[RMDB]
RNA sequence: GGGAACGACUCGAGUAGAGUCGAAAACGAUUUUCCAUAAUGAAACGUUUCUCCGCUUCAUUAACCAUUCUAUGUUGCUCAGGUAAGUCUUUGGCAAUAAUCGCCCAUAAUACAGCCAUUAAAAUACAAGAUCGUACGGAUUCGUCCGUACGAUCUUAAAAGAAACAACAACAACAAC
Reactivity to DMS in 0.01 (KOAc 150mM, MgCl2 10mM, bicine 150mM(pH8.5), 24C), signal-to-noise 1, nucleotides 027 to 126: c070g020a160u030u000u000u000c020c050a300u030a030a070u020g000a010a030a010c000g010u000u000u000c090u010c190c030g030c040u000u010c020a030u000u000a040a130c150c090a140u000u030c030u000a060u000g010u010u000g010c010u010c170a030g000g000u000a060a090g010u000c000u000u020u000g010g000c030a060a040u000a060a110u000c140g050c000c030c010a150u020a070a060u010a140c130a100g000c030c020a090u000u020a030a020a070a060u050a100c190